[RMDB]
RNA sequence: GGGAACGACUCGAGUAGAGUCGAAAAGAUGACCGGUUCGCCGGUCAUCAAAUAGGGAAACGGCGUGCGCGGCACGGUCCGCGGAACAAACGGAAAAUAAAAAAACGCUAACCUUCGGGUUAGCGAAGACAAAUACAACGUUCGCGUUGUAUUUGUCAAAAGAAACAACAACAACAAC
Reactivity to DMS in 0.01 (KOAc 150mM, MgCl2 10mM, bicine 150mM(pH8.5), 24C), signal-to-noise 2, nucleotides 027 to 126: g000a010u010g010a010c000c000g000g000u000u000c300g030c020c010g020g010u010c000a000u010c000a010a100a060u000a110g000g030g000a060a100a070c050g010g000c040g010u000g000c010g040c070g000g020c010a140c120g030g000u000c000c000g030c010g000g000a180a060c060a040a080a080c110g000g000a100a060a060a090u080a060a040a080a040a060a080a150c020g000c000u000a000a010c000c020u000u020c210g020g000g000u000u000a000g000c000g000a000a010
Reactivity to 2A3 in 0.01 (KOAc 150mM, MgCl2 10mM, bicine 150mM(pH8.5), 24C), signal-to-noise 2, nucleotides 027 to 126: g000a000u010g000a010c000c000g010g030u030u030c140g030c060c020g000g000u000c000a010u000c000a000a000a000u070a000g010g010g060a070a070a030c020g030g010c030g020u050g020c170g030c060g130g000c040a030c160g060g080u040c000c010g000c000g030g010a050a030c040a040a120a010c050g100g070a030a090a110a020u290a050a160a040a020a010a000a010c020g000c000u000a000a000c010c000u020u050c260g070g010g000u020u000a000g000c000g000a000a010
An RNA of 177 nucleotides, treated with DMS and 2A3 and read out base by base. DMS (dimethyl sulfate) methylates the pairing face of unpaired adenines and cytosines. The 2A3 profile rests on 3,156 reads. 2A3 adducts were read by reverse transcription with SuperScript II with manganese. Source: RMDB library M2PK50, as collected in RNAgym. The RNA was probed in 150 mM KOAc, 10 mM MgCl2 and 150 mM bicine (pH 8.5) at 24 C.